[RMDB]
RNA sequence: GGGAACGACUCGAGUAGAGUCGAAAAGGGGUCUUGUGGAGUCGCCCGUGGUUGUCAGAGACUGAAGCCUCCACGGUCUCUUGGAUUUACCACACUCCGACUAUGAAGCAAGACGGAGGCACCCAAACCCUUGCUGUGGUUCGCCACAGCAAGGGAAUCAUGAUAAACUCUUCGGAGUUUAUCAUGAAAAAGAAACAACAACAACAAC
Reactivity to 2A3 in 0.01 (KOAc 150mM, MgCl2 10mM, bicine 150mM(pH8.5), 24C), signal-to-noise 2, nucleotides 027 to 156: g050g030g040g020u010c050u040u010g030u040g010g030a020g000u030c000g040c060c110c140g050u040g000g080u290u300g130u250c030a010g010a010g000a000c000u020g040a000a000g040c000c000u000c000c000a020c030g000g030u000c000u000c030u060u150g060g000a050u170u200u300a110c010c000a000c000a010c030u150c090c010g000a000c000u090a120u300g040a000a000g020c010a020a000g000a000c000g000g000a000g000g000c000a020c010c000c000a070a110a130c000c010c030u000u000g000c000u000g000u020g000g080u070u100c200g060c140c000a000c000a000g010c000a000a000g000g000g000a000a010